Conditions: 150 mM KOAc, 10 mM MgCl2 and 150 mM bicine (pH 8.5), 24 C. The record gives the reactivity of an RNA of 207 nucleotides to 2A3. For 2A3 the reverse transcriptase was SuperScript II with manganese. Reactivities are rounded to 0.1 and cut off at 0 and 3.
RNA sequence: GGGAACGACUCGAGUAGAGUCGAAAAACAUGCUGGCCAACCCAACCCCACGAUCCUCCAUCGGCAUGAUCAUGAUGUGUUCUCAAAUAUCAGGCCAGUAAAUCACCAUUCUCGUGCUGGUAAAGGCAACUUAUGCCCAAGUUCGCUUGGGCAUAAAGACACCGCCUCUAUUCGUAGAGGCGGUGUCAAAAGAAACAACAACAACAAC
Reactivity to 2A3 in 0.01 (KOAc 150mM, MgCl2 10mM, bicine 150mM(pH8.5), 24C), signal-to-noise 2, nucleotides 027 to 156: a010c050a030u060g010c000u000g020g000c020c000a060a060c070c020c000a060a080c050c020c020c030a040c120g070a180u070c000c000u000c010c040a060u060c010g010g000c060a020u030g010a050u050c040a030u060g060a040u110g020u010g030u050u040c040u000c000a060a090a020u230a110u080c040a030g000g020c000c000a000g010u000a020a080a030u100c020a000c040c020a010u050u010c010u060c040g000u050g020c030u010g000g000u010a060a060a110g030g000c040a070a010c030u030u010a000u010g010c000c010c000a010a000g000u020u070c090g020c140u000u000g040g020g000c000a000u000a000a000a000

The data come from the RNA Mapping Database (RMDB), library M2RFOK.